[RMDB]
RNA sequence: GGGAACGACUCGAGUAGAGUCGAAAACGCAAUUGAGUGGCAUCUUCCUGCUGAAUCUGUUGAUACAUAGGAUAGAAUUGCGCACUGGUCACCAGCAGGCACGCCUGGCUAUUUUGCAGGAUCCACGUGCGUCCAUGAGUUUCGACUCAUGGACGCAAAAAGAAACAACAACAACAAC
Reactivity to DMS in 0.01 (KOAc 150mM, MgCl2 10mM, bicine 150mM(pH8.5), 24C), signal-to-noise 1, nucleotides 027 to 126: c110g010c110a080a040u010u030g010a050g010u000g000g000c260a060u000c050u000u000c010c010u000g030c110u000g000a080a030u000c100u000g000u020u020g010a050u000a110c070a000u000a050g020g010a120u000a060g000a040a040u020u010g000c000g010c040a070c070u000g000g010u010c050a110c110c000a130g100c050a060g000g070c100a050c170g040c050c020u020g020g040c140u030a080u000u000u000u000g000c000a000g020g000a020u000c060c110a090c090g030
Reactivity to 2A3 in 0.01 (KOAc 150mM, MgCl2 10mM, bicine 150mM(pH8.5), 24C), signal-to-noise 1, nucleotides 027 to 126: c100g000c010a050a050u050u160g040a120g040u000g050g030c010a060u010c020u000u000c000c060u070g060c050u010g020a030a030u000c010u080g110u100u160g130a070u150a100c080a120u070a070g010g000a040u020a130g130a130a220u180u030g020c100g040c010a000c080u070g010g000u110c000a010c060c000a040g010c040a020g000g110c090a000c000g010c000c000u070g050g050c070u080a110u050u130u100u090g060c010a020g000g030a040u040c040c000a010c010g060

Source: RMDB library OK2TST, as collected in RNAgym. This 177-nucleotide RNA was probed chemically with DMS and 2A3. DMS adducts were read by reverse transcription with MarathonRT. For DMS, 772 sequencing reads were counted. The 2A3 profile rests on 667 reads. For 2A3 the reverse transcriptase was SuperScript II with manganese. Conditions: 150 mM KOAc, 10 mM MgCl2 and 150 mM bicine (pH 8.5), 24 C.